An RNA of 177 nucleotides, treated with DMS and 2A3 and read out base by base. Reactivities are given for positions 27 through 126. The 2A3 profile rests on 2,219 reads. Source: RMDB library M2PK90, as collected in RNAgym.
RNA sequence: GGGAACGACUCGAGUAGAGUCGAAAAUGAAAGUAGUCUCCUGCAGCGUCUGGGGUUUCCGUUGCAGUCCUGGGAACCAGGACCUCGGCGUGGCCUAGCGAGUUAUGGCGACGAAGGCCGUGAAAAAGUCUUGUAUAGUCUUCGGACUAUACAAGACAAAAGAAACAACAACAACAAC
Reactivity to DMS in 0.01 (KOAc 150mM, MgCl2 10mM, bicine 150mM(pH8.5), 24C), signal-to-noise 3, nucleotides 027 to 126: u010g000a100a050a090g010u000a100g000u000c020u000c010c000u000g010c070a110g010c050g010u010c030u000g000g020g020g010u000u000u000c200c010g010u000u000g010c100a090g000u000c010c010u000g010g010g010a130a240c050c010a020g010g000a020c010c030u000c010g010g000c070g000u000g000g020c010c010u000a080g000c030g010a140g000u000u000a080u010g020g020c050g020a080c080g010a140a130g010g000c010c000g030u000g000a050a070a070a090a110
Reactivity to 2A3 in 0.01 (KOAc 150mM, MgCl2 10mM, bicine 150mM(pH8.5), 24C), signal-to-noise 2, nucleotides 027 to 126: u150g000a060a030a030g050u090a000g000u000c030u020c020c000u050g000c040a060g070c030g090u100c030u110g010g000g000g000u020u110u000c050c010g030u020u040g000c080a010g000u000c000c010u020g020g010g120a120a180c030c000a000g020g010a000c020c020u010c000g040g030c010g040u060g060g000c000c000u000a040g020c010g020a010g010u180u150a110u240g060g000c000g010a050c010g010a070a020g040g000c020c010g040u100g040a070a040a040a040a010